RNA sequence: GGGAACGACUCGAGUAGAGUCGAAAAGUUAGGUGAGGCGGCUACACGAACAUAGGCCAAUGACCCCGAACGUCGAGAGACGCCCCGGGUCAGGACAGCUCUUCCCGGCUUAAGGGUUGAGCCCAGGUAUCACCCUGGCUAUUCGUAGCCAGGGUAAACAAAUACGAGAGUUCGCUCUCGUAUUUGUAAAAGAAACAACAACAACAAC
Reactivity to 2A3 in 0.01 (KOAc 150mM, MgCl2 10mM, bicine 150mM(pH8.5), 24C), signal-to-noise 2, nucleotides 027 to 156: g100u100u060a080g000g050u020g030a020g050g040c030g020g030c030u050a020c080a000c100g080a150a020c100a130u140a070g060g000c010c070a060a120u050g040a040c030c020c010c050g040a040a000c010g000u010c000g020a040g000a000g000a160c010g000c000c040c030c010g010g020g020u000c010a000g020g030a030c020a020g010c000u000c000u020u000c000c000c000g030g000c080u130u170a110a120g020g010g020u020u030g000a000g030c000c000c030a050g010g020u170a070u220c040a010c000c000c000u000g010g000c010u040a080u070u160c250g130u040a010g000c000c000a000g000g000g000u000a000a010
Reactivity to DMS in 0.01 (KOAc 150mM, MgCl2 10mM, bicine 150mM(pH8.5), 24C), signal-to-noise 2, nucleotides 027 to 156: g000u000u000a080g020g000u000g020a070g010g010c020g040g010c020u000a070c060a110c110g020a120a100c050a180u000a050g000g030c000c010a080a100u000g000a050c020c000c000c050g010a050a050c010g010u000c010g000a300g000a300g000a030c020g030c030c020c080c210g000g000g000u010c010a050g010g020a060c030a080g020c000u000c010u000u000c020c020c000g000g010c170u000u000a090a160g000g010g020u010u010g010a080g000c000c030c000a120g020g010u000a070u000c000a070c000c000c000u000g010g020c010u000a030u000u000c240g060u000a000g000c000c030a000g020g020g010u000a020a040